This 170-nucleotide RNA was probed chemically with 2A3. The reactions ran in a buffer of 150 mM KOAc, 10 mM MgCl2 and 150 mM bicine (pH 8.5), at 24 C. 2A3 adducts were read by reverse transcription with SuperScript II with manganese. Values are in units of 0.01, from 0 to 300, in steps of 10.
[RMDB]
RNA sequence: GGGAACGACUCGAGUAGAGUCGAAAAUCAGGUGUUCCACCCCCCGAGAGGGUACGAGUGAGGCUUAUCCCGGGGAACUCGGCGAAUCGUCCCCACAUAGCAGUUCCCAGGACCCCCUUCUAAAAUGACGGCCGCACGUUCGCGUGCGGCAAAAGAAACAACAACAACAAC
Reactivity to 2A3 in 0.01 (KOAc 150mM, MgCl2 10mM, bicine 150mM(pH8.5), 24C), signal-to-noise 1, nucleotides 027 to 129: u050c000a020g170g000u000g040u050u000c000c020a060c000c000c000c000c000c000g010a040g000a030g040g000g030u140a000c000g000a000g000u060g030a000g090g000c000u010u010a020u140c090c000c000g080g010g000g090a000a000c000u020c080g010g020c000g000a050a050u010c020g090u060c000c050c110c000a010c000a000u160a000g000c000a000g000u000u000c000c000c070a000g000g070a050c000c000c000c000c000u010u000c150u200a090a040a000a000u100g030a020c090g090